RNA sequence: GGGAACGACUCGAGUAGAGUCGAAAAUUGAGAACGAUGCCCCUCUGCUGCUCUUUAGAGGCGUUCGUGGUGGGCCUGAUGGACGAGUGGCAGCCGGAGGGUUUGGAGAUGGGGUACAGCGAGAGCGAAAACGAAAGCGAGCCCGCGUCGCUUCACGCGCAGCAUAGAAUUUCGAUUCUAUGCUGCGAAAAGAAACAACAACAACAAC
Reactivity to 2A3 in 0.01 (KOAc 150mM, MgCl2 10mM, bicine 150mM(pH8.5), 24C), signal-to-noise 2, nucleotides 027 to 156: u110u100g040a070g020a090a010c060g030a030u110g040c000c000c000c000u020c010u000g000c010u000g000c000u020c050u090u130u120a150g040a050g020g040c020g030u030u100c070g000u060g000g030u050g010g010g020c070c030u110g040a130u140g010g020a040c060g020a020g030u130g020g020c000a000g000c010c040g020g070a040g020g050g030u060u060u060g030g000a020g020a020u040g000g000g000g000u050a110c040a030g060c040g050a020g000a000g120c050g050a070a050a010a020c040g030a100a000a010g010c010g000a000g000c020c050c000g070c020g030u020c000g030c000u000u010c050a010c040g050

The record gives the reactivity of an RNA of 207 nucleotides to 2A3. The 2A3 profile rests on 856 reads. 2A3 adducts were read by reverse transcription with SuperScript II with manganese. Reactivities are rounded to 0.1 and cut off at 0 and 3. The reactions ran in a buffer of 150 mM KOAc, 10 mM MgCl2 and 150 mM bicine (pH 8.5), at 24 C. It was measured as part of the RMDB library OK3TST.